Annotation: This 177-nucleotide RNA was probed chemically with 2A3 and DMS. The 2A3 profile rests on 89,130 reads. Reactivities are given for positions 27 through 126. For DMS, 84,430 sequencing reads were counted.

RNA sequence: GGGAACGACUCGAGUAGAGUCGAAAACAUCCAGGCGGGAGCACGAAGGCGUACUCGUGCUCUGUCAGCACUGGGUGCUGAGGCGACGCAAGCGGCGCUGUCACGCCCGGGGUAUGGGUUAUACCACCCAGGAGGCGAUCUUCGGGUUGCCUCUUGGAAAAGAAACAACAACAACAAC
Reactivity to 2A3 in 0.01 (KOAc 150mM, MgCl2 10mM, bicine 150mM(pH8.5), 24C), signal-to-noise 9, nucleotides 027 to 126: c030a010u000c000c000a010g020g000c000g000g010g000a000g000c000a000c000g020a040a020g080g050c100g070u130a070c030u000c000g000u000g000c000u000c000u000g020u010c010a020g010c010a020c020u000g000g000g000u000g000c040u020g020a020g000g010c010g000a020c010g020c060a080a070g070c020g030g000c000g000c030u050g240u160c010a010c030g010c000c000c000g000g010g000g000u120a090u090g030g000g000u040u040a040u030a050c000c010a020c010
Reactivity to DMS in 0.01 (KOAc 150mM, MgCl2 10mM, bicine 150mM(pH8.5), 24C), signal-to-noise 9, nucleotides 027 to 126: c050a010u000c000c000a020g000g000c000g000g000g000a010g000c000a000c000g010a030a090g010g010c180g010u040a080c040u000c000g010u000g000c000u000c000u000g000u060c000a050g000c000a120c000u000g000g010g010u000g000c130u010g000a300g000g010c020g010a040c020g010c090a120a130g020c040g010g000c020g010c020u000g000u000c020a070c080g010c010c010c010g010g000g000g020u020a100u010g010g000g000u000u010a080u020a140c020c020a100c160